[RMDB]
Chemical mapping of a 177-nucleotide RNA with 2A3 and DMS. The RNA was probed in 150 mM KOAc, 10 mM MgCl2 and 150 mM bicine (pH 8.5) at 24 C. For 2A3, 1,377 sequencing reads were counted. For 2A3 the reverse transcriptase was SuperScript II with manganese. Reactivities are given for positions 27 through 126.

RNA sequence: GGGAACGACUCGAGUAGAGUCGAAAAUACAUAGUGGAAACACCAGGGCCACAUUACUUAGGUAUCAAGAUGAACGACGUGGAACUAGCUUAUUAAAUUGGCAUAACAUAGACACCAAGAAAUAGAAUCCUUUAUUACCUUUCGAGGUAAUAAAGGAAAAAGAAACAACAACAACAAC
Reactivity to 2A3 in 0.01 (KOAc 150mM, MgCl2 10mM, bicine 150mM(pH8.5), 24C), signal-to-noise 2, nucleotides 027 to 126: u180a030c070a010u150a060g050u020g010g070a050a030a000c020a010c010c030a040g010g000g020c040c040a030c020a000u020u060a030c040u030u040a030g050g050u030a050u120c000a010a060g000a220u090g050a080a030c070g060a020c040g030u050g000g020a010a020c020u010a020g060c010u040u050a070u060u180a280a140a060u100u040g040g000c000a020u020a150a010c010a000u050a030g060a050c020a000c060c000a020a030g070a080a070a020u160a050g070a080a030
Reactivity to DMS in 0.01 (KOAc 150mM, MgCl2 10mM, bicine 150mM(pH8.5), 24C), signal-to-noise 5, nucleotides 027 to 126: u010a100c090a080u010a070g030u000g010g010a100a060a110c060a060c040c060a060g020g010g010c020c040a030c080a070u000u010a040c070u000u000a040g020g010u000a050u010c080a080a080g000a050u000g010a070a080c080g010a050c080g030u010g010g010a050a080c040u000a070g010c040u010u000a050u000u000a030a070a090u010u010g000g010c080a060u000a050a050c080a070u000a060g010a070c090a050c020c020a030a040g010a030a040a070u010a090g010a080a140